[RMDB]
This 177-nucleotide RNA was probed chemically with DMS and 2A3.
Reactivities are given for positions 27 through 126.
The 2A3 profile rests on 9,462 reads.
The reactions ran in a buffer of 150 mM KOAc, 10 mM MgCl2 and 150 mM bicine (pH 8.5), at 24 C.
RNA sequence: GGGAACGACUCGAGUAGAGUCGAAAAUGGACUGCGUUCGCGCAGUCCAAAACAAUAGACGAACACUAGCGUAGAAGUGUUCAGGUCACAUAACUACGCAAAAAAGCUGAGUGUUCGCACUCAGCAAUCUAACUAACCGAUUCGUCGGUUAGUUAGAAAAAGAAACAACAACAACAAC
Reactivity to DMS in 0.01 (KOAc 150mM, MgCl2 10mM, bicine 150mM(pH8.5), 24C), signal-to-noise 4, nucleotides 027 to 126: u010g010g000a020c000u000g020c000g020u000u010c210g020c000g010c000a010g000u010c010c000a010a000a060a070c130a070a090u000a100g000a130c100g010a020a020c010a020c020u000a120g020c010g000u000a000g010a200a050g020u000g000u000u000c030a090g000g020u000c110a060c100a080u010a110a160c020u000a010c000g020c020a000a060a080a080a070a090g010c000u000g000a010g010u000g010u000u010c180g010c000a020c010u010c000a000g020c000a030a020
Reactivity to 2A3 in 0.01 (KOAc 150mM, MgCl2 10mM, bicine 150mM(pH8.5), 24C), signal-to-noise 4, nucleotides 027 to 126: u040g010g000a000c000u000g020c000g030u030u050c150g010c010g000c080a000g010u000c000c000a000a000a000a000c010a010a030u130a070g110a040c050g010a020a000c010a010c030u040a090g010c000g020u010a010g020a230a010g010u010g000u010u020c030a010g040g080u100c050a020c000a210u120a160a050c020u000a000c000g000c000a060a070a010a040a000a000g010c000u000g000a000g000u020g020u100u080c220g000c030a000c000u000c000a000g000c000a010a040